Source information: An RNA of 177 nucleotides, treated with 2A3 and read out base by base. The reactions ran in a buffer of 150 mM KOAc, 10 mM MgCl2 and 150 mM bicine (pH 8.5), at 24 C.
RNA sequence: GGGAACGACUCGAGUAGAGUCGAAAAGAUGGUGCUAAACUAUUCAUGAGAAACUGUCCCCGUGAUCCAGUCACCUUCCACCAGGCCCCACCUCCAACAAUGGGGAUUACAAUUCAUGAGAUUUGGGGGCUCGGUAUGAAUUCGUUCAUACCGAGCCAAAAGAAACAACAACAACAAC
Reactivity to 2A3 in 0.01 (KOAc 150mM, MgCl2 10mM, bicine 150mM(pH8.5), 24C), signal-to-noise 1, nucleotides 027 to 126: g050a100u180g020g090u150g000c100u110a030a040a110c020u060a210u090u030c010a060u000g000a000g120a050a220a060c010u090g000u060c000c000c000c000g040u090g000a070u000c020c000a000g070u050c000a010c020c000u030u010c070c050a110c010c010a000g040g000c020c000c010c020a000c030c000u070c040c010a110a080c020a110a050u100g000g000g000g000a000u030u030a070c030a030a030u110u040c000a000u090g030a040g000a300u130u100u130g010g000g010